[RMDB]
RNA sequence: GGGAACGACUCGAGUAGAGUCGAAAAGGCGGCUAGUUCGCUAGCCGCCAAAGUGCACAGUCGCCUGCCAAGUGCACAAAAUAAAAGAAAAGGUAGGCGACAAAAGAGGGGCGUUCGCGCCCCUCAAGUAACGAAAAGAGUUCGCUCUUUUCGUUACAAAAGAAACAACAACAACAAC
Reactivity to DMS in 0.01 (KOAc 150mM, MgCl2 10mM, bicine 150mM(pH8.5), 24C), signal-to-noise 2, nucleotides 027 to 126: g000g060c000g060g030c000u000a010g010u010u010c250g010c000u000a000g020c000c000g020c010c000a010a000a060g010u000g000c010a020c020a110g020u000c010g010c010c000u000g010c000c000a060a150g010u020g000c000a000c000a080a040a130a090u000a120a080a120a090g000a080a050a180a110g000g010u000a010g030g020c000g010a000c030a020a050a100a130g000a030g000g000g010g000c010g040u010u010c160g000c010g030c000c000c010c010u000c000a000a040